[RMDB]
RNA sequence: GGGAACGACUCGAGUAGAGUCGAAAAUGAAGGCCUUCGGGUUGUAAACCGCUGUCAGAGGGGAUGAAAUCGUUGGGGGCUAUCCCCCUUCGUUGACAGAGCCUCAGAGGAAGCGCGGGCUAAGUUCCCCACACAGUCUAUUCGUAGACUGUGUGGGAAAAGAAACAACAACAACAAC
Reactivity to DMS in 0.01 (KOAc 150mM, MgCl2 10mM, bicine 150mM(pH8.5), 24C), signal-to-noise 3, nucleotides 027 to 126: u020g020a200a140g020g000c010c020u000u000c110g020g020g010u000u000g010u020a000a120a140c060c010g000c000u000g020u000c050a110g010a030g000g000g010g000a300u000g010a060a080a000u000c020g020u000u000g020g000g000g000g030c300u060a240u050c020c010c000c020c000u000u000c020g020u010u010g040a270c000a020g000a300g000c030c020u000c010a050g010a030g010g000a100a080g010c130g020c070g000g000g000c070u020a080a200g010u000u010c070
Reactivity to 2A3 in 0.01 (KOAc 150mM, MgCl2 10mM, bicine 150mM(pH8.5), 24C), signal-to-noise 2, nucleotides 027 to 126: u090g050a060a070g040g020c000c000u090u020c040g050g040g000u030u060g030u110a070a020a030c000c020g000c080u060g110u110c010a010g010a000g010g000g000g000a040u060g000a000a150a000u040c000g000u000u000g020g000g010g020g070c170u220a220u300c000c000c000c000c000u000u030c000g020u030u040g030a010c000a000g000a020g090c000c000u040c000a100g060a010g090g140a070a100g010c000g000c010g030g050g010c030u010a010a060g050u040u040c000
The data come from the RNA Mapping Database (RMDB), libraries RFM100 and RFMREP. Structure probing data (DMS and 2A3) for a 177-nucleotide construct. The RNA was probed in 150 mM KOAc, 10 mM MgCl2 and 150 mM bicine (pH 8.5) at 24 C. 2A3 adducts were read by reverse transcription with SuperScript II with manganese.